[RMDB]
RNA sequence: GGGAACGACUCGAGUAGAGUCGAAAAAAAAAGACCCAAGACACCCUUGGCAGAUGACCUCCUCGUUGGUGGGUGUGGGUAAUGUUGUCAGUCACAGGCAACAGUUAACGAUCUGCCUUACAAAAAACACAUAAGUAAGCUUCGGCUUACUUAUGUGAAAAGAAACAACAACAACAAC
Reactivity to DMS in 0.01 (KOAc 150mM, MgCl2 10mM, bicine 150mM(pH8.5), 24C), signal-to-noise 2, nucleotides 027 to 126: a050a020a050a070a120g000a060c000c010c000a130a090g010a300c030a020c010c000c000u000u000g020g000c010a030g010a010u000g010a040c000c010u000c040c040u000c170g000u000u010g010g000u000g020g000g010u000g020u000g000g020g000u000a050a040u000g000u000u000g020u000c000a080g000u010c300a100c290a090g010g010c000a000a010c010a030g000u000u000a030a020c020g010a020u000c010u000g000c020c010u000u000a040c120a000a040a110a050a050a090
Reactivity to 2A3 in 0.01 (KOAc 150mM, MgCl2 10mM, bicine 150mM(pH8.5), 24C), signal-to-noise 2, nucleotides 027 to 126: a000a030a000a050a000g090a010c000c000c010a000a020g070a000c000a000c000c000c000u000u050g010g010c010a000g010a000u000g010a010c000c000u010c010c010u130c140g100u100u160g010g000u020g020g000g000u010g020u020g010g010g010u070a070a060u020g000u000u010g010u000c020a040g110u140c070a050c050a180g000g000c000a000a010c000a010g020u030u050a000a010c010g010a000u030c020u000g000c000c000u000u030a030c000a010a090a000a000a020a010
Chemical mapping of a 177-nucleotide RNA with DMS and 2A3. DMS adducts were read by reverse transcription with MarathonRT. The 2A3 profile rests on 3,879 reads. Values are in units of 0.01, from 0 to 300, in steps of 10. High DMS reactivity at an A or C suggests that its Watson-Crick edge is free. For 2A3 the reverse transcriptase was SuperScript II with manganese. The DMS profile rests on 2,482 reads. The data come from the RNA Mapping Database (RMDB), library M2PK90.